Chemical mapping of a 177-nucleotide RNA with 2A3 and DMS.
Conditions: 150 mM KOAc, 10 mM MgCl2 and 150 mM bicine (pH 8.5), 24 C.
RNA sequence: GGGAACGACUCGAGUAGAGUCGAAAAGCAAAAGGAGAAUGGAUGACGACGGAAGACAUGCUCGCAGUCUGGAACAGAGUGUGGAUUGAGGAGAAUGAGUGGAUGGAAGACAAAACACCAGUUGAGAUCGUCCGAAUAGGUUCGCCUAUUCGGACGAAAAAGAAACAACAACAACAAC
Reactivity to 2A3 in 0.01 (KOAc 150mM, MgCl2 10mM, bicine 150mM(pH8.5), 24C), signal-to-noise 1, nucleotides 027 to 126: g050c020a070a040a000a050g010g040a020g040a160a170u070g030g010a040u040g030a050c050g000a010c030g030g000a080a000g010a020c040a020u080g020c000u030c000g000c020a000g040u010c050u030g030g010a050a070c000a020g020a010g020u070g000u080g040g000a080u130u000g070a030g000g010a040g060a070a100u130g040a010g020u030g040g000a060u010g000g020a000a010g040a030c030a040a040a060a020c080a010c080c050a020g020u090u080g060a060g000a030
Reactivity to DMS in 0.01 (KOAc 150mM, MgCl2 10mM, bicine 150mM(pH8.5), 24C), signal-to-noise 2, nucleotides 027 to 126: g030c150a020a040a150a080g020g010a040g000a030a090u000g000g010a020u000g010a060c070g000a100c170g010g020a130a140g000a110c080a060u000g040c030u000c040g000c100a100g000u010c060u000g000g000a110a110c150a150g000a060g000u000g000u010g000g010a080u000u000g000a090g010g000a070g000a140a080u000g000a040g000u000g000g010a060u000g000g050a070a030g000a010c090a030a050a080a140c170a090c040c040a120g000u000u010g000a110g020a160
Source: RMDB library OK2TRN, as collected in RNAgym.
For 2A3, 960 sequencing reads were counted.
2A3 adducts were read by reverse transcription with SuperScript II with manganese.
DMS adducts were read by reverse transcription with MarathonRT.